[RMDB]
RNA sequence: GGGAACGACUCGAGUAGAGUCGAAAAUGAAGCAAAUCCAUAAUUGCCAAUGAUGAGCAAUUCGCUAUUGCCGCCUAAUAACGGUUAGCCGGGGCUGCUAGAGCCUUGUUACCAAAGAUAGCCGGCGUUACGGCAUGAUGGUUCGCCAUCAUGCCAACCCAUCAACCAUCUUCGGAUGGUUGAUGGGAAAAGAAACAACAACAACAAC
Reactivity to 2A3 in 0.01 (KOAc 150mM, MgCl2 10mM, bicine 150mM(pH8.5), 24C), signal-to-noise 2, nucleotides 027 to 156: u170g020a040a070g030c010a010a000a190u100c040c010a040u070a200a030u080u030g000c000c000a090a120u210g070a100u140g030a160g020c000a010a020u100u020c050g020c060u060a040u100u210g030c020c000g030c010c020u080a150a080u050a130a000c070g000g020u010u160a020g000c040c010g040g000g010g020c000u000g110c050u090a090g040a010g220c000c000u000u040g020u050u070a030c000c010a070a000a000g110a090u040a000g080c030c000g010g000c020g090u110u110a060c100g000g000c000a000u000g000a000u000g000g080u010u010c070g050c100c000a000u000c000a000u000g020c000c000a000a000

This 207-nucleotide RNA was probed chemically with 2A3. Source: RMDB library M2RFPK, as collected in RNAgym.